[RMDB]
RNA sequence: GGGAACGACUCGAGUAGAGUCGAAAAACCUUAUUUUGAGAAGCUGAGGGAUUUGGCCCAUAGAAGCGUCAGCAACCGACUUUAAAUAGCACGGUGCUAAUACCAACGAGCAACUCGAAUGAUAAGUAAAACGUUGACAAGUUCGCUUGUCAACGAAGCGUAAGUUCUAGUUCGCUAGAACUUACGCAAAAGAAACAACAACAACAAC
Reactivity to DMS in 0.01 (KOAc 150mM, MgCl2 10mM, bicine 150mM(pH8.5), 24C), signal-to-noise 1, nucleotides 027 to 156: a080c010c020u010u000a190u010u000u000u000g020a110g000a070a300g030c030u010g010a100g020g000g000a110u000u020u000g010g020c000c000c010a120u010a130g020a110a070g000c050g050u000c010a010g010c000a040a040c000c000g040a070c000u000u000u030a140a100a100u000a060g000c000a110c030g030g020u010g000c020u000a070a030u000a070c020c030a030a080c170g010a190g040c010a000a300c060u000c040g000a050a070u000g010a120u000a000a050g010u010a050a040a080a090c000g010u000u000g000a010c000a020a000g030u000u000c300g040c000u040u010g010u010c000a000a060c000g000a020a080
Reactivity to 2A3 in 0.01 (KOAc 150mM, MgCl2 10mM, bicine 150mM(pH8.5), 24C), signal-to-noise 4, nucleotides 027 to 156: a000c030c000u040u100a080u020u040u010u050g030a000g010a020a030g000c030u050g030a120g050g040g050a090u070u080u130g070g000c010c060c030a040u090a080g150a140a020g030c030g060u070c040a030g020c020a030a030c000c000g040a040c010u140u080u140a110a230a220u140a120g010c030a010c050g020g010u010g000c010u010a020a030u090a090c020c000a050a040c050g090a030g020c000a000a060c000u010c040g040a070a040u030g040a020u060a100a000g020u070a010a080a030a050c020g000u000u000g000a000c000a000a000g000u010u060c050g020c130u000u000g000u000c000a000a000c000g000a020a010
The data come from the RNA Mapping Database (RMDB), library M2RFPK. An RNA of 207 nucleotides, treated with DMS and 2A3 and read out base by base. DMS adducts were read by reverse transcription with MarathonRT. The RNA was probed in 150 mM KOAc, 10 mM MgCl2 and 150 mM bicine (pH 8.5) at 24 C. For DMS, 2,033 sequencing reads were counted.